[RMDB]
RNA sequence: GGGAACGACUCGAGUAGAGUCGAAAAAUUGUGGGAGCAGGCUUCGGCGAUGACCGAGCAUUUAGGCGAGCGGGAUCGGGUCCGGAUGAGUCGGGUUGGACUGGCGCCGUUGCCUACCAACCAGGCGUCACCCUUGCUCAUUCGUGAGCAAGGGUGAAAAAGAAACAACAACAACAAC
Reactivity to DMS in 0.01 (KOAc 150mM, MgCl2 10mM, bicine 150mM(pH8.5), 24C), signal-to-noise 1, nucleotides 027 to 126: a150u020u000g020u010g020g000g000a170g000c050a130g020g000c020u000u000c030g010g000c030g020a220u000g020a100c040c020g010a070g010c070a180u010u000u000a110g020g000c090g010a080g030c120g040g000g000a110u000c070g000g000g000u000c050c060g000g000a110u010g020a120g020u000c000g000g010g000u000u030g020g000a200c160u010g000g030c010g030c120c240g000u000u000g040c000c020u000a090c030c000a050a060c000c010a090g020g010c070g010
Reactivity to 2A3 in 0.01 (KOAc 150mM, MgCl2 10mM, bicine 150mM(pH8.5), 24C), signal-to-noise 1, nucleotides 027 to 126: a000u130u100g040u050g050g040g050a040g060c020a050g060g080c030u110u130c070g000g000c030g120a210u210g050a070c000c000g000a010g000c020a040u060u100u180a070g070g040c090g020a020g030c060g120g000g000a000u150c120g000g000g000u050c080c040g140g020a100u130g070a010g030u070c060g010g000g040u070u050g050g070a300c050u020g000g000c030g020c040c230g110u090u150g000c010c000u020a040c020c000a000a000c020c020a000g000g000c040g010